Chemical mapping of a 177-nucleotide RNA with 2A3 and DMS. Conditions: 150 mM KOAc, 10 mM MgCl2 and 150 mM bicine (pH 8.5), 24 C. Reactivities are given for positions 27 through 126. Source: RMDB library OK1LIB, as collected in RNAgym. For 2A3 the reverse transcriptase was SuperScript II with manganese.
RNA sequence: GGGAACGACUCGAGUAGAGUCGAAAAAGGCAUAAUAUUUGGUGCUAAUAUAGCUAUAGUAAUAAACGUAAUUUAGAAUAGAGGUUACGGACUCGGGGGCAGUACCCGACGCCUCCACCAAAACUAACAGCUGUCUUGCGUUCGCGUAAGAUAGCUGAAAAGAAACAACAACAACAAC
Reactivity to 2A3 in 0.01 (KOAc 150mM, MgCl2 10mM, bicine 150mM(pH8.5), 24C), signal-to-noise 9, nucleotides 027 to 126: a000g100g000c060a080u090a120a060u070a260u110u070u150g060g020u040g020c020u030a100a070u150a060u060a100g020c040u050a040u050a150g090u120a100a170u120a150a130a010c020g020u030a040a070u040u070u110a130g100a220a130u110a080g100a030g120g010u040u030a010c040g020g070a080c070u070c110g010g000g000g010g000c010a030g030u050a070c000c000c000g010a010c010g000c000c000u020c000c000a030c020c020a030a070a020a030c030u060a050a010
Reactivity to DMS in 0.01 (KOAc 150mM, MgCl2 10mM, bicine 150mM(pH8.5), 24C), signal-to-noise 7, nucleotides 027 to 126: a090g010g000c050a040u030a100a060u020a040u010u000u010g000g030u030g020c020u010a070a040u020a080u020a050g010c050u010a080u010a090g010u020a080a080u020a060a070a120c020g000u000a010a010u000u000u020a080g010a110a140u020a150g010a040g020g010u000u000a020c030g000g000a090c190u000c170g000g010g000g000g010c020a090g000u010a090c010c010c010g000a120c140g000c000c000u010c010c010a110c130c100a030a060a050a100c130u010a100a200
For DMS, 17,581 sequencing reads were counted.